[RMDB]
RNA sequence: GGGAACGACUCGAGUAGAGUCGAAAACAAUUUGUAUUUCAUCAUUUUUCACACGCACACCUUGUUAGGAGUGAUUGUACUCGCCAACAUUCAAGUGAAAUCUUCUUGGUCUGUUCACACAUAAAGAUCCAUACCGGUAGUUCGCUACCGGUAUGGAAAAAGAAACAACAACAACAAC
Reactivity to 2A3 in 0.01 (KOAc 150mM, MgCl2 10mM, bicine 150mM(pH8.5), 24C), signal-to-noise 1, nucleotides 027 to 126: c000a060a150u060u110u200g110u090a200u030u140u080c010a040u020c020a060u070u000u000u030u050c040a040c020a000c090g020c010a010c020a030c060c010u050u050g070u060u110a070g000g050a010g010u020g050a100u020u070g040u030a020c030u010c060g000c000c000a040a030c000a030u060u140c030a150a050g030u010g000a090a030a020u070c050u050u000c030u010u120g000g020u040c020u030g070u030u050c050a020c000a010c020a110u140a130a110a020g190a050
Reactivity to DMS in 0.01 (KOAc 150mM, MgCl2 10mM, bicine 150mM(pH8.5), 24C), signal-to-noise 2, nucleotides 027 to 126: c020a110a110u000u010u000g000u000a060u010u030u010c060a100u040c040a070u000u000u000u000u000c070a040c040a110c180g030c110a090c070a040c110c070u000u030g010u010u020a050g030g030a040g010u030g010a110u020u000g000u000a060c020u000c070g000c090c050a020a050c070a050u010u000c070a030a180g000u000g010a040a100a160u000c010u000u000c010u010u000g000g000u000c020u000g020u020u000c030a060c080a070c120a140u010a070a100a080g030a120
The record gives the reactivity of an RNA of 177 nucleotides to 2A3 and DMS.
The DMS profile rests on 918 reads.
Reactivities are given for positions 27 through 126.
The data come from the RNA Mapping Database (RMDB), library OK2TST.